[RMDB]
RNA sequence: GGGAACGACUCGAGUAGAGUCGAAAAGAGGGUUCGCCCUCGUUGGACCGUAGGUAUCCAAUCUUUUGACGACUCGGGUGUCCUUCGAAAGAGGGACAUCUCUAGCGUGGUCGAUAAGAUUAGGAUACCUAAACGGAGGUUAUCUAUUCGUAGAUAACAUAUAGCGCCGAUUCGUCGGCGCUAUAUGAAAAGAAACAACAACAACAAC
Reactivity to DMS in 0.01 (KOAc 150mM, MgCl2 10mM, bicine 150mM(pH8.5), 24C), signal-to-noise 3, nucleotides 027 to 156: g000a020g000g030g000u000u010c220g030c020c000c000u000c000g010u000u000g020g010a140c010c010g010u000a040g020g030u000a010u010c010c000a060a040u000c010u000u000u000u000g000a080c040g000a070c020u000c040g000g000g030u000g000u000c000c000u000u010c000g000a140a130a300g000a030g010g010g000a020c000a000u000c010u000c020u010a070g010c110g020u000g030g030u000c010g020a050u000a030a020g010a040u000u000a130g050g000a020u000a010c010c000u000a000a010a070c030g010g010a150g020g010u000u000a010u000c010u000a050u000u010c210g030u000a020g010a040u000a020a130
Reactivity to 2A3 in 0.01 (KOAc 150mM, MgCl2 10mM, bicine 150mM(pH8.5), 24C), signal-to-noise 3, nucleotides 027 to 156: g020a000g000g050g020u090u210c290g170c000c000c020u010c010g000u010u070g080g080a080c000c000g030u020a000g000g010u000a000u000c000c000a000a010u000c010u000u020u010u040g040a030c040g020a030c000u010c030g010g000g010u010g000u000c020c000u000u010c010g090a140a080a040g000a010g000g010g000a000c000a020u020c020u000c020u020a050g040c040g090u060g100g030u020c010g040a040u020a280a000g000a010u030u020a130g000g000a000u000a000c000c000u010a020a010a000c010g000g010a060g030g030u030u010a010u030c000u000a040u070u190c180g050u080a030g020a010u060a030a000